[RMDB]
Chemical mapping of a 177-nucleotide RNA with 2A3 and DMS. The RNA was probed in 150 mM KOAc, 10 mM MgCl2 and 150 mM bicine (pH 8.5) at 24 C.
RNA sequence: GGGAACGACUCGAGUAGAGUCGAAAAGUACUAGUCUAUAAGACUAGGUACAAUGGAACAUACUACGUUCAACCAUCAUUUGAUGUUCAAGAGAGUGAAGGAUAUGGGUCUCCUACAAAAUAAGGAGCCAUUUAGGCUGUUUCGACAGCCUAAAUGGAAAAGAAACAACAACAACAAC
Reactivity to 2A3 in 0.01 (KOAc 150mM, MgCl2 10mM, bicine 150mM(pH8.5), 24C), signal-to-noise 6, nucleotides 027 to 126: g010u000a000c000u000a000g010u000c010u040a230u070a300a050g000a000c000u000a010g050g020u020a000c050a020a080u140g080g010a020a000c010a030u260a140c080u110a060c160g050u010u040c010a050a030c020c000a010u050c010a040u060u060u240g070a060u040g040u100u060c090a120a010g050a010g010a010g110u100g040a070a050g080g020a020u040a060u150g060g000g010u000c000u000c000c010u060a050c090a050a200a020a020u160a120a020g020g000a010g000
Reactivity to DMS in 0.01 (KOAc 150mM, MgCl2 10mM, bicine 150mM(pH8.5), 24C), signal-to-noise 5, nucleotides 027 to 126: g000u020a030c020u000a000g010u000c010u010a140u050a100a110g000a000c000u000a000g020g010u000a000c030a080a150u010g000g030a030a020c020a160u020a150c130u020a090c140g000u020u020c030a130a190c090c010a070u010c020a080u010u000u010g000a130u000g000u030u020c220a080a060g020a250g010a040g000u000g010a030a060g030g030a090u010a050u010g000g020g000u020c000u010c020c000u000a120c150a040a090a100a070u030a060a040g000g000a050g000